RNA sequence: GGGAACGACUCGAGUAGAGUCGAAAAUGCAGUAACCGAUCAUCAUCUUGUUGGCAUUUAAGCAGCGCCGCGGCAGCUUGUAGCUCUGAGGACUGACUGGUGGUUAGCAGUGACUGCAAGGUAUCCACUCAACACGACUAUUCGUAGUCGUGUUGAGAAAAGAAACAACAACAACAAC
Reactivity to DMS in 0.01 (KOAc 150mM, MgCl2 10mM, bicine 150mM(pH8.5), 24C), signal-to-noise 3, nucleotides 027 to 126: u010g010c030a040g000u020a090a020c020c020g000a020u000c090a030u010c030a080u000c050u010u020g000u000u010g010g010c060a160u020u010u000a080a100g010c050a080g000c030g030c030c070g010c040g000g010c120a050g030c010u000u000g020u020a120g010c050u010c030u010g010a060g000g020a170c060u000g000a060c150u000g010g010u010g000g010u000u000a060g020c140a100g020u000g000a050c060u000g010c030a020a060g000g010u010a070u000c010c040a220
Reactivity to 2A3 in 0.01 (KOAc 150mM, MgCl2 10mM, bicine 150mM(pH8.5), 24C), signal-to-noise 3, nucleotides 027 to 126: u040g000c010a000g030u010a040a000c040c000g040a020u030c020a010u000c000a020u000c020u100u180g030u050u090g100g000c060a130u060u080u210a100a050g040c030a020g050c030g000c080c030g010c020g040g000c040a030g020c000u140u210g120u170a020g000c020u010c030u070g050a040g010g070a080c010u020g030a040c060u020g010g030u050g030g000u010u020a050g030c060a010g020u000g040a050c020u010g010c000a000a000g070g000u070a090u020c020c000a030